Chemical mapping of a 177-nucleotide RNA with DMS and 2A3. The RNA was probed in 150 mM KOAc, 10 mM MgCl2 and 150 mM bicine (pH 8.5) at 24 C. DMS adducts were read by reverse transcription with MarathonRT. The DMS profile rests on 3,058 reads.

[RMDB]
RNA sequence: GGGAACGACUCGAGUAGAGUCGAAAAGAUAUGGAACAAUGUCAGCGGGAGCUCUGUAACAAGAACCUUAUCGGAAACGAUAAGGUUCCGCCCAGAGCGAGGAUCGCUGACCGCUUGUUCCUAAGUCGGACAUAUUACAGUUCGCUGUAAUAUGUCCAAAAGAAACAACAACAACAAC
Reactivity to DMS in 0.01 (KOAc 150mM, MgCl2 10mM, bicine 150mM(pH8.5), 24C), signal-to-noise 3, nucleotides 027 to 126: g000a090u020a300u010g000g000a020a020c010a250a040u010g010u010c010a020g000c000g000g000g000a070g000c000u010c000u000g020u000a090a140c300a140a060g010a000a000c000c000u000u000a000u000c010g000g000a170a100a180c000g010a020u010a000a010g010g010u000u000c000c010g010c300c190c010a030g000a010g010c000g010a040g010g000a020u000c020g000c010u000g000a010c010c000g010c030u000u000g000u000u000c000c000u000a020a090g000u020c090
Reactivity to 2A3 in 0.01 (KOAc 150mM, MgCl2 10mM, bicine 150mM(pH8.5), 24C), signal-to-noise 2, nucleotides 027 to 126: g060a040u180a100u300g000g000a010a000c010a030a000u300g000u000c000a000g000c020g000g010g000a020g010c010u000c020u020g130u270a190a110c090a220a070g000a000a000c000c010u030u000a000u000c010g000g060a080a070a060c010g000a010u000a000a000g000g000u000u000c000c000g000c000c030c000a010g020a010g000c000g030a180g030g010a020u000c010g000c000u000g000a000c020c000g020c010u010u020g010u020u040c000c000u000a110a010g140u070c120